[RMDB]
RNA sequence: GGGAACGACUCGAGUAGAGUCGAAAAGGAUCCUUCGUAGUCAGGGUAACUGCCUCCAGUACAGUUACCAGUGAUGACUAGUCAAUGUGUCAUCGUACUGGAGGAUGACGUAUUGACUUAAGGAUCGCUACAUCAAAGUAUUCGUACUUUGAUGUAGAAAAGAAACAACAACAACAAC
Reactivity to 2A3 in 0.01 (KOAc 150mM, MgCl2 10mM, bicine 150mM(pH8.5), 24C), signal-to-noise 8, nucleotides 027 to 126: g030g000a000u000c000c000u010u050c110g070u040a010g000u000c030a020g040g000g020u010a020a010c010u020g030c000c020u020c040c020a030g020u080a020c000a010g010u000u010a010c000c010a020g040u030g060a080u010g020a020c020u020a010g010u010c010a000a020u020g020u010g000u010c000a000u000c020g060u100a060c060u110g120g040a030g100g000a000u010g000a000c010g000u020a020u010u010g000a010c010u010u040a010a000g000g000a000u000c000g000
Reactivity to DMS in 0.01 (KOAc 150mM, MgCl2 10mM, bicine 150mM(pH8.5), 24C), signal-to-noise 9, nucleotides 027 to 126: g010g000a010u000c000c000u000u000c190g010u010a070g010u000c000a040g000g000g010u000a010a020c020u000g010c120c030u000c180c180a110g010u010a230c010a020g000u000u000a010c010c010a090g010u010g010a110u000g000a050c060u000a050g000u000c020a010a010u000g010u000g000u000c010a010u000c010g030u010a100c150u010g010g000a030g010g000a010u000g000a020c020g020u000a020u000u000g000a010c000u000u000a020a010g020g010a010u000c000g000